[RMDB]
RNA sequence: GGGAACGACUCGAGUAGAGUCGAAAAUGCGCCGUUAUUGCCCAGGACAAUCGGGUCACCGGUCAGGUCAACGUCAACCAGACGGGCAAAGGCGAUGAUGUAUUCGCGGAACACAUACGCCUGUGUUUUACUGGCCGACAGAAAAAUCUGGUUAUGACUCGAGAUACUAGUUCGCUAGUAUCUCGAGAAAAGAAACAACAACAACAAC
Reactivity to 2A3 in 0.01 (KOAc 150mM, MgCl2 10mM, bicine 150mM(pH8.5), 24C), signal-to-noise 3, nucleotides 027 to 156: u140g000c060g020c050c010g070u050u140a100u080u150g020c000c000c010a030g010g080a040c030a030a040u090c090g010g020g030u050c040a030c080c020g000g030u020c020a010g010g030u070c080a090a060c020g000u010c010a050a110c090c010a050g000a010c010g000g000g020c000a060a080a000g000g000c070g000a000u000g020a030u000g030u070a250u030u150c120g030c100g130g080a050a000c010a000c010a030u160a300c020g000c000c010u000g000u000g040u060u040u070u180a070c040u000g000g000c000c000g020a030c050a050g180a050a130a000a010a020u030c010u040g000g000u060u070a090u160g040a030
Reactivity to DMS in 0.01 (KOAc 150mM, MgCl2 10mM, bicine 150mM(pH8.5), 24C), signal-to-noise 2, nucleotides 027 to 156: u000g020c040g050c000c030g080u000u010a100u020u000g000c020c020c060a290g040g040a070c100a090a130u000c000g020g020g020u000c070a110c100c000g030g030u000c040a050g050g040u000c100a160a180c090g040u000c030a030a110c100c070a190g000a050c060g020g020g000c020a060a050a030g030g050c020g020a060u000g030a060u000g010u000a070u000u000c020g000c110g030g010a070a010c040a010c010a060u000a160c020g010c010c020u000g000u010g000u000u010u010u000a130c010u000g000g030c000c010g010a070c030a210g020a020a070a100a070a050u000c020u010g000g000u000u000a080u010g010a300

The record gives the reactivity of an RNA of 207 nucleotides to 2A3 and DMS. Values cover nucleotides 27 to 156. 2A3 adducts were read by reverse transcription with SuperScript II with manganese.